The record gives the reactivity of an RNA of 177 nucleotides to 2A3 and DMS. 2A3 adducts were read by reverse transcription with SuperScript II with manganese. DMS adducts were read by reverse transcription with MarathonRT.
RNA sequence: GGGAACGACUCGAGUAGAGUCGAAAAGAUUCUGUCACCAUUGACUUUGGGUCGUCAGGAACAGUGCGGCUAAUGCUGAUCGGUUCAGUGCCUAUGGAAAAGCUCUAGGACGUCUUAGGGGGACGUGACCACCCUCAAAAUUCGUUUUGAGGGUGGUAAAAGAAACAACAACAACAAC
Reactivity to 2A3 in 0.01 (KOAc 150mM, MgCl2 10mM, bicine 150mM(pH8.5), 24C), signal-to-noise 2, nucleotides 027 to 126: g040a060u100u030c020u070g110u070c030a010c060c020a070u010u130g050a060c040u060u070u100g020g010g030u000c030g020u000c030a060g050g040a030a040c020a030g020u030g110c010g070g000c050u070a140a030u150g020c010u020g050a110u100c040g060g000u070u040c010a020g010u020g090c020c020u080a070u090g060g030a040a060a020a010g030c000u000c030u070a030g080g000a020c010g030u000c030u070u110a070g050g000g000g020g000a010c010g000u000g010
Reactivity to DMS in 0.01 (KOAc 150mM, MgCl2 10mM, bicine 150mM(pH8.5), 24C), signal-to-noise 3, nucleotides 027 to 126: g000a090u000u000c040u020g000u010c040a100c070c110a090u010u000g010a060c050u000u000u000g020g020g020u000c050g010u000c040a080g010g000a050a080c100a060g030u010g010c040g010g000c040u020a060a080u010g010c040u000g010a100u000c090g010g000u010u010c050a060g000u000g010c040c030u010a040u010g010g000a070a040a070a120g020c050u000c050u000a140g000g000a070c030g010u010c010u000u000a170g000g010g010g000g010a080c090g000u010g000